[RMDB]
RNA sequence: GGGAACGACUCGAGUAGAGUCGAAAAUGGGAUUCGACAGGCGUAGAUUCGCGUUGACUGCGAUUCGUAGGUCACGUCUACGUUAAAAACGUCACAGUUAAAUUAUAACUGCAAAUAACGAAAAUUCUUACGCAGUAGCUGCUUAGUCAGCCUGCGUCAAGUGGGACCUGUUCGCAGGUCCCACUUGAAAAGAAACAACAACAACAAC
Reactivity to 2A3 in 0.01 (KOAc 150mM, MgCl2 10mM, bicine 150mM(pH8.5), 24C), signal-to-noise 1, nucleotides 027 to 156: u110g050g060g050a050u160u100c080g080a040c050a070g060g000c030g000u000a000g010a070u190u110c050g000c030g100u080u080g000a020c030u000g000c020g210a300u130u100c010g020u030a080g150g000u010c000a000c010g030u000c000u010a010c020g000u030u040a060a000a000a050a050c010g020u030c000a000c000a050g010u030u050a120a080a190u260u210a080u090a210a010c000u040g030c080a060a040a090u140a120a080c070g080a050a040a040a100u130u000c050u080u080a010c000g000c010a000g000u060a050g000c010u010g010c050u070u190a090g080u300c000a000g000c000c000u000g010c000g010u000

Chemical mapping of a 207-nucleotide RNA with 2A3. The 2A3 profile rests on 771 reads. The reactions ran in a buffer of 150 mM KOAc, 10 mM MgCl2 and 150 mM bicine (pH 8.5), at 24 C.